[RMDB]
Conditions: 150 mM KOAc, 10 mM MgCl2 and 150 mM bicine (pH 8.5), 24 C. Chemical mapping of a 177-nucleotide RNA with 2A3 and DMS. For DMS, 2,703 sequencing reads were counted. For 2A3 the reverse transcriptase was SuperScript II with manganese. DMS adducts were read by reverse transcription with MarathonRT.
RNA sequence: GGGAACGACUCGAGUAGAGUCGAAAAGCGCGUAAAUACGGCCGCUAUUCUUUCUUGUAGAACAAAAUGAGGUCGUUGUGUGUGGGUCCAGGUCCAUCGUCGUUUUGUUCAAGAACGGUUUGUGCGCCGAGGCAAAAUGAUUCGUCAUUUUGCCUCGAAAAGAAACAACAACAACAAC
Reactivity to 2A3 in 0.01 (KOAc 150mM, MgCl2 10mM, bicine 150mM(pH8.5), 24C), signal-to-noise 1, nucleotides 027 to 126: g000c010g000c000g060u040a000a160a020u190a120c010g020g020c020c010g000c070u050a080u060u070c020u030u130u040c040u060u110g180u210a060g010a030a030c020a010a020a020a050u010g010a010g020g050u070c090g090u090u070g070u010g010u000g000u030g030g000g020u000c040c030a090g020g020u000c000c000a030u010c000g120u010c010g010u010u020u010u010g020u000u000c010a010a000g010a010a010c000g020g060u030u000u150g040u040g000c030g020c000
Reactivity to DMS in 0.01 (KOAc 150mM, MgCl2 10mM, bicine 150mM(pH8.5), 24C), signal-to-noise 2, nucleotides 027 to 126: g010c040g020c010g010u020a070a050a110u000a070c060g000g000c010c010g010c160u000a050u010u010c090u000u000u000c110u000u000g010u000a100g010a050a040c070a010a010a010a020u000g020a080g020g020u000c060g010u000u010g020u010g010u000g020u000g000g010g010u000c020c110a080g010g020u010c010c040a040u000c050g020u000c020g020u000u000u020u000g010u000u000c050a080a050g000a030a090c070g000g010u000u000u000g030u000g000c050g030c050